Structure probing data (DMS and 2A3) for a 177-nucleotide construct. The 2A3 profile rests on 2,601 reads. For DMS, 2,636 sequencing reads were counted. Reactivities are given for positions 27 through 126.
RNA sequence: GGGAACGACUCGAGUAGAGUCGAAAAGACAUCAGCCUGCCGAGCGCGCUGCUCGACGAUGCGCUGAAGCUGCUGCUCGCCGAGGUGCGCACGCGGCUGAAGUACCUGUGCGACGUGGGGCUCGGCAGUCGAGGGUAAUGUUCGCAUUACCCUCGACAAAAGAAACAACAACAACAAC
Reactivity to DMS in 0.01 (KOAc 150mM, MgCl2 10mM, bicine 150mM(pH8.5), 24C), signal-to-noise 2, nucleotides 027 to 126: g000a090c160a110u000c060a020g020c070c020u000g040c050c030g010a070g000c010g000c030g010c030u010g020c070u000c010g040a020c020g010a080u020g030c120g000c000u000g020a140a080g020c120u000g020c010u000g010c030u000c030g030c000c030g030a090g030g000u000g020c090g010c000a040c150g010c050g000g010c000u000g000a080a050g020u000a080c050c070u010g000u010g020c020g010a050c080g030u000g000g010g000g010c050u010c030g000g000c050a070
Reactivity to 2A3 in 0.01 (KOAc 150mM, MgCl2 10mM, bicine 150mM(pH8.5), 24C), signal-to-noise 2, nucleotides 027 to 126: g110a010c040a110u060c010a020g100c020c010u070g050c100c020g000a030g010c070g000c030g050c080u120g060c030u000c020g000a010c010g050a070u170g010c050g010c070u050g010a060a030g070c070u070g000c020u080g010c010u030c010g000c010c010g090a100g120g040u050g010c000g010c020a010c070g000c000g000g000c000u010g000a000a000g020u030a070c010c030u060g080u150g190c040g010a050c080g040u040g010g040g090g030c020u010c010g050g000c060a020